[RMDB]
RNA sequence: GGGAACGACUCGAGUAGAGUCGAAAAUUAUACCGUAAAUCUUUUUAAAUUCUGGAACUAAUUAUAUAGAGGAUAUGUCUCAAUUUGUUCUGCAUUAAUGCCACAGUGGGGAUGGAGGCCGGGCCGUGUAUGCACAGUUGUUCGCAACUGUGCAUACAAAAGAAACAACAACAACAAC
Reactivity to 2A3 in 0.01 (KOAc 150mM, MgCl2 10mM, bicine 150mM(pH8.5), 24C), signal-to-noise 1, nucleotides 027 to 126: u030u070a120u040a070c070c070g010u010a000a000a230u080c010u050u130u030u020u110a030a130a300u150u030c040u100g000g000a000a000c070u080a160a000u110u070a150u050a080u120a170g010a000g000g040a000u010a050u300g130u040c070u000c030a070a050u050u000u000g000u020u010c010u020g000c010a040u050u270a030a070u160g000c000c000a020c000a070g060u000g020g010g000g000a010u000g020g000a040g010g000c020c000g060g030g010c050c000g010u010